[RMDB]
The record gives the reactivity of an RNA of 177 nucleotides to DMS. Reactivities are given for positions 27 through 126. It was measured as part of the RMDB library TTRINS. The reactions ran in a buffer of 150 mM KOAc, 10 mM MgCl2 and 150 mM bicine (pH 8.5), at 24 C.

RNA sequence: GGGAACGACUCGAGUAGAGUCGAAAAGAUAUGGAUUAUCGUUCGCGAAGACAGCUCCCCUGGCUUACUCACUCGGAAACGAGUGAGGUAAGCCAGGGGAGUCGAGUGAACGAAUAAUCCUAAGUCACUAUAAGACAAGCUUCGGCUUGUCUUAUAGAAAAGAAACAACAACAACAAC
Reactivity to DMS in 0.01 (KOAc 150mM, MgCl2 10mM, bicine 150mM(pH8.5), 24C), signal-to-noise 1, nucleotides 027 to 126: g010a070u020a300u010g010g020a030u000u000a000u010c020g020u000u000c000g030c010g010a110a150g010a050c300a150g000c000u000c000c000c000c040u000g030g000c010u030u000a040c000u010c010a010c000u000c000g040g000a140a040a170c010g010a030g040u020g000a000g020g020u010a000a000g030c020c010a000g000g010g000g000a020g000u000c010g000a030g040u000g030a000a020c000g020a020a040u000a000a010u000c020c000u010a020a140g010u000c070a260